[RMDB]
RNA sequence: GGGAACGACUCGAGUAGAGUCGAAAAAGUUGGUGCAGUGAAUAAGGUAGUAAGCGUGAUGCCUUAGGGUGCAUGCCGAUGAGUCAUCAUUGACCUAGUGUGAUUCUACCGAUAUAGAUUAGGCGCAGCCCCCCCUCAUGUUCGCAUGAGGGGGGGCAAAAGAAACAACAACAACAAC
Reactivity to DMS in 0.01 (KOAc 150mM, MgCl2 10mM, bicine 150mM(pH8.5), 24C), signal-to-noise 1, nucleotides 027 to 126: a060g020u010u000g010g050u000g050c010a170g020u010g010a020a030u020a260a100g000g020u000a000g000u000a300a100g030c000g060u000g000a130u000g040c020c000u000u000a090g060g050g010u000g020c000a010u000g000c050c030g000a230u000g010a240g020u010c170a000u000c010a000u000u000g000a180c010c010u000a030g010u010g010u000g000a000u000u000c000u000a070c010c000g000a160u000a030u000a000g000a040u000u000a050g020g000c010g100c040a100